[RMDB]
RNA sequence: GGGAACGACUCGAGUAGAGUCGAAAAGGGCUCGGGCGGUAUCGCCGGAAUCUGCACGCGGUCGCGCCGCGGACAUGGGCGGUAAAUCCGUGAGAGCCUGCGCCGCACGGCCGCGCGCACGCCGACACGUAUCAUAGGAUUUCGAUCCUAUGAUACGAAAAGAAACAACAACAACAAC
Reactivity to 2A3 in 0.01 (KOAc 150mM, MgCl2 10mM, bicine 150mM(pH8.5), 24C), signal-to-noise 9, nucleotides 027 to 126: g050g000g000c040u050c100g050g040g000c050g050g140u240a140u300c030g020c020c020g030g010a030a070u060c040u070g000c010a000c010g000c010g000g020u020c010g000c010g000c030c020g000c000g000g000a010c010a080u180g030g090g010c030g000g020u090a160a140a080u100c010c010g010u040g040a250g010a010g040c000c000u010g000c030g010c010c030g000c000a020c030g020g000c000c000g000c010g000c010g000c010a010c030g020c000c010g030a040c050a010
Reactivity to DMS in 0.01 (KOAc 150mM, MgCl2 10mM, bicine 150mM(pH8.5), 24C), signal-to-noise 9, nucleotides 027 to 126: g010g000g020c030u000c030g010g000g020c020g010g010u010a050u010c040g030c010c010g010g010a060a080u010c100u010g020c040a050c010g010c010g010g010u000c040g020c060g010c050c030g010c000g010g010a020c020a070u010g010g000g000c000g000g010u000a070a130a140u010c000c000g010u000g010a240g010a120g000c010c000u010g000c020g010c150c130g020c020a060c030g010g000c010c010g010c010g010c020g010c010a060c200g010c010c010g010a120c150a220